[RMDB]
RNA sequence: GGGAACGACUCGAGUAGAGUCGAAAAUCAUUGCAACGUCAAUAUCAUGUAUCAAACGUGGCUCACUAACACAGUGAAAAAGUGUUCAAGAAAACCACCUUUGAUUGUCGCGUCAUAUGCCCAAACAAGGAUCUCUCCUUUGAAAAGAUGUGAAACAGGCACUACCAUGAUUCGUCAUGGUAGUGCCAAAAGAAACAACAACAACAAC
Reactivity to 2A3 in 0.01 (KOAc 150mM, MgCl2 10mM, bicine 150mM(pH8.5), 24C), signal-to-noise 2, nucleotides 027 to 156: u060c020a000u010u070g020c060a210a040c020g060u100c030a100a090u100a100u140c150a110u210g060u090a000u060c010a010a010a010c040g010u000g000g000c000u000c060a070c080u020a030a020c000a000c000a110g210u150g280a070a090a000a000a060g030u030g000u030u040c100a110a020g020a010a030a020a000c000c000a000c010c000u000u000u080g000a000u000u090g100u110c030g000c020g050u010c030a010u000a050u160g010c000c000c000a030a080a050c070a040a020g000g020a060u040c010u010c000u000c100c020u050u000u020g090a060a060a000a030g000a040u100g030u100g100a160a080a000c000a080
Description:
The data come from the RNA Mapping Database (RMDB), library OK3TST. Chemical mapping of a 207-nucleotide RNA with 2A3. Reactivities are rounded to 0.1 and cut off at 0 and 3. The RNA was probed in 150 mM KOAc, 10 mM MgCl2 and 150 mM bicine (pH 8.5) at 24 C. 2A3 adducts were read by reverse transcription with SuperScript II with manganese.